An RNA of 177 nucleotides, treated with DMS and read out base by base. The DMS profile rests on 8,090 reads. DMS adducts were read by reverse transcription with MarathonRT. The data come from the RNA Mapping Database (RMDB), library TTRINS. The reactions ran in a buffer of 150 mM KOAc, 10 mM MgCl2 and 150 mM bicine (pH 8.5), at 24 C.
RNA sequence: GGGAACGACUCGAGUAGAGUCGAAAAGAUAUGGAUGUUCGUGUACUCAAUGCGAUGAGCUUGGACCUGGUCGGUCGGAAACGACCGCCAGCUAGCUUAAGCAUUGAGUACACGAACAUCCUAAGUCCUAUAUACCUGAGUUCGCUCAGGUAUAUAGAAAAGAAACAACAACAACAAC
Reactivity to DMS in 0.01 (KOAc 150mM, MgCl2 10mM, bicine 150mM(pH8.5), 24C), signal-to-noise 5, nucleotides 027 to 126: g000a090u010a300u010g010g010a020u000g010u000u000c000g010u010g010u000a000c000u000c000a000a010u000g000c010g010a220u020g000a010g000c010u000u000g040g000a130c300c020u000g010g000u020c030g030g020u000c000g020g000a080a110a260c010g000a020c000c000g010c000c000a010g000c030u000a010g010c000u000u000a090a300g010c000a000u000u000g010a000g000u000a000c000a010c000g000a000a000c000a010u000c000c000u000a010a080g010u000c040